Chemical mapping of a 207-nucleotide RNA with 2A3 and DMS. The RNA was probed in 150 mM KOAc, 10 mM MgCl2 and 150 mM bicine (pH 8.5) at 24 C. 2A3 adducts were read by reverse transcription with SuperScript II with manganese.
[RMDB]
RNA sequence: GGGAACGACUCGAGUAGAGUCGAAAACGUUUCCCGUGUUGGUGGCGCAGCUCAGACCAAGGGUAUGAAGAAGGUUUCCGGUUCGUUGCGUCUGGAUCUCGCUGCUUAUCGCGACCUCGAGGCAUUCGCUACCUUCGCAUCUGACCUCGAUGCUGCAAUGAUUACGGGAGUUCGCUCCCGUAAUCAUAAAAGAAACAACAACAACAAC
Reactivity to 2A3 in 0.01 (KOAc 150mM, MgCl2 10mM, bicine 150mM(pH8.5), 24C), signal-to-noise 1, nucleotides 027 to 156: c070g000u010u050u000c110c000c000g010u000g000u040u060g010g000u030g060g000c040g000c000a010g040c040u020c100a070g020a050c010c040a050a070g070g000g030u130a050u150g160a020a160g040a040a080g080g020u080u070u000c050c030g010g110u110u130c050g020u090u050g010c020g010u040c010u010g020g080a100u040c010u010c130g000c030u070g040c100u150u090a120u220c000g000c050g070a080c020c000u010c050g010a010g000g090c020a040u010u090c060g040c080u050a120c000c040u040u090c000g000c060a080u020c050u150g170a300c000c000u020c020g000a030u080g010c000u160g000c020a000
Reactivity to DMS in 0.01 (KOAc 150mM, MgCl2 10mM, bicine 150mM(pH8.5), 24C), signal-to-noise 1, nucleotides 027 to 156: c070g010u000u000u000c000c010c040g050u010g020u030u020g000g000u000g000g000c020g000c040a090g050c050u010c060a300g000a070c050c010a080a260g000g040g030u000a070u000g020a120a120g010a090a100g000g010u000u010u000c020c050g080g050u000u000c090g050u000u020g050c050g030u010c040u000g020g000a050u000c030u000c000g000c020u000g030c030u000u000a070u000c020g000c030g020a040c020c040u000c030g000a150g000g000c020a190u000u030c120g030c000u000a050c010c050u000u010c030g050c050a050u000c000u000g000a140c010c030u000c020g030a130u000g030c000u010g030c030a300